[RMDB]
Chemical mapping of a 207-nucleotide RNA with 2A3. It was measured as part of the RMDB library RNAMAK. Reactivities are rounded to 0.1 and cut off at 0 and 3.
RNA sequence: GGGAACGACUCGAGUAGAGUCGAAAACAUUUAAAACAUUCGUGUUUUAAAUGAUCUAGAUAUGGACCUGGCACAACAGCUACUGAUCGGAAACGAUCGAAGUAGACAUGUGCCCUGUCCUAAGUCGCACGGGUUGGCAGUUUCGACUGCCAACCAAGCCUUCUGGAUAGUUCGCUAUCCAGAAGGCAAAAGAAACAACAACAACAAC
Reactivity to 2A3 in 0.01 (KOAc 150mM, MgCl2 10mM, bicine 150mM(pH8.5), 24C), signal-to-noise 3, nucleotides 027 to 156: c010a000u000u000u000a010a020a000a000c000a030u070u100c210g080u090g010u020u020u010u000a020a010a000u000g010a000u070c080u160a050g010a000u000a010u040g000g000a000c010c030u010g010g010c010a000c020a190a170c110a210g070c010u000a000c000u020g000a000u000c000g000g030a020a010a020c000g010a000u000c010g060a160a000g000u020a010g130a170c110a210u030g000u000g000c000c000c000u010g000u000c010c000u000a000a010g000u010c020g020c100a050c180g070g000g010u010u020g010g000c010a010g000u030u050u110c190g190a050c010u000g000c000c010a000a000c000c000a000a000